[RMDB]
RNA sequence: GGGAACGACUCGAGUAGAGUCGAAAAGAUAUGGACUUGCAGAGAGCAUAGGCACUAUUCGGAAACGAACGAAUGCCUAGCUCGACGAAGCAAGUCCUAAGUCAAGGGCCAGACUUCGGUCUGGCAAGAACUCUCUGCACUUCGGUGCAGAGAGUUCAAAAGAAACAACAACAACAAC
Reactivity to DMS in 0.01 (KOAc 150mM, MgCl2 10mM, bicine 150mM(pH8.5), 24C), signal-to-noise 1, nucleotides 027 to 126: g000a000u010a300u000g000g000a010c000u000u000g040c000a050g000a120g000a020g000c000a130u010a040g020g040c010a040c100u000a240u000u000c020g010g000a100a080a160c010g030a010a000c100g000a050a100u000g000c010c000u000a000g000c000u000c010g010a140c190g010a060a040g000c000a010a010g000u010c000c000u000a000a030g000u000c020a090a230g010g000g000c000c010a000g010a010c020u000u000c250g010g000u000c000u000g000g030c000a030a010
Source information
Structure probing data (DMS) for a 177-nucleotide construct. Values cover nucleotides 27 to 126. For DMS, 767 sequencing reads were counted. The data come from the RNA Mapping Database (RMDB), library TTRDEL.